Source information: Chemical mapping of a 177-nucleotide RNA with 2A3 and DMS. Reactivities are rounded to 0.1 and cut off at 0 and 3. For 2A3 the reverse transcriptase was SuperScript II with manganese. The 2A3 profile rests on 1,765 reads. The RNA was probed in 150 mM KOAc, 10 mM MgCl2 and 150 mM bicine (pH 8.5) at 24 C.
[RMDB]
RNA sequence: GGGAACGACUCGAGUAGAGUCGAAAAACACUUCGGUCAUAGCAACAGUCAGAGACAACUUGGAAGAACUAGAGGAAGUUGUGUAUAAGCCCCAGAAGUUUUUCAGGAAAGUGGAAUUACGGACCACCAGAGUUGAUACGUUCGCGUAUCAACUCUGAAAAGAAACAACAACAACAAC
Reactivity to 2A3 in 0.01 (KOAc 150mM, MgCl2 10mM, bicine 150mM(pH8.5), 24C), signal-to-noise 4, nucleotides 027 to 126: a010c000a010c010u040u010c000g040g080u050c060a050u040a040g040c060a010a040c010a040g050u030c030a000g070a020g020a210c020a080a050c080u060u080g100g050a150a100g000a180a030c030u090a060g010a030g180g060a040a000g070u150u060g020u060g060u010a060u030a210a030g060c020c000c000c000a050g030a160a080g020u010u000u020u070u090c020a050g000g100a190a040a000g050u020g020g020a030a030u130u050a130c100g060g020a030c030c000a000c000
Reactivity to DMS in 0.01 (KOAc 150mM, MgCl2 10mM, bicine 150mM(pH8.5), 24C), signal-to-noise 3, nucleotides 027 to 126: a060c040a090c040u000u000c020g000g000u010c020a070u010a030g020c050a020a090c120a080g000u020c030a050g000a140g010a070c120a070a040c060u010u010g020g030a080a080g010a090a050c110u040a090g000a090g000g000a060a080g010u000u000g000u000g030u010a040u020a100a130g000c050c010c000c050a100g010a070a100g000u010u000u000u010u000c050a090g000g000a090a040a110g020u030g000g020a090a060u050u050a060c150g000g000a130c010c000a010c050